The record gives the reactivity of an RNA of 177 nucleotides to DMS and 2A3.
Source: RMDB library OK1LIB, as collected in RNAgym.

[RMDB]
RNA sequence: GGGAACGACUCGAGUAGAGUCGAAAAAGCCGGUCAUAUCACCGCGUCGACGCUGGUGCUCGACGACCGUGGCCACGUGCUGCUCACCCUGCAUCCGCGGCUGGGCCGUUGGGUGCAGCUGGGCGGGCGUAGGAUUAUGGUUCGCCAUAAUCCUACGAAAAGAAACAACAACAACAAC
Reactivity to DMS in 0.01 (KOAc 150mM, MgCl2 10mM, bicine 150mM(pH8.5), 24C), signal-to-noise 6, nucleotides 027 to 126: a070g010c060c010g000g000u000c020a120u020a090u010c040a070c040c050g000c000g000u020c210g010a080c090g020c030u030g020g020u030g010c120u010c100g000a060c120g000a030c040c030g000u030g010g000c010c000a090c130g000u010g020c010u000g010c020u010c000a040c210c240c010u000g010c000a010u000c000c010g010c000g000g000c010u050g030g010g010c000c000g010u010u020g050g000g000u000g000c000a010g020c300u000g000g000g010c040g000g010g020
Reactivity to 2A3 in 0.01 (KOAc 150mM, MgCl2 10mM, bicine 150mM(pH8.5), 24C), signal-to-noise 9, nucleotides 027 to 126: a000g070c030c020g000g000u030c020a040u060a060u240c040a030c050c020g030c010g080u130c070g080a140c070g030c120u270g090g080u190g030c040u050c040g090a070c060g020a030c020c030g030u080g030g010c010c010a090c080g100u170g060c010u010g000c000u000c000a030c010c020c000u000g000c000a010u010c000c000g000c000g030g000c030u290g120g210g010c020c010g050u180u300g010g000g000u010g000c000a000g000c010u020g010g010g000c000g030g000g000

For 2A3, 17,219 sequencing reads were counted. For DMS, 17,815 sequencing reads were counted. DMS adducts were read by reverse transcription with MarathonRT. The reactions ran in a buffer of 150 mM KOAc, 10 mM MgCl2 and 150 mM bicine (pH 8.5), at 24 C.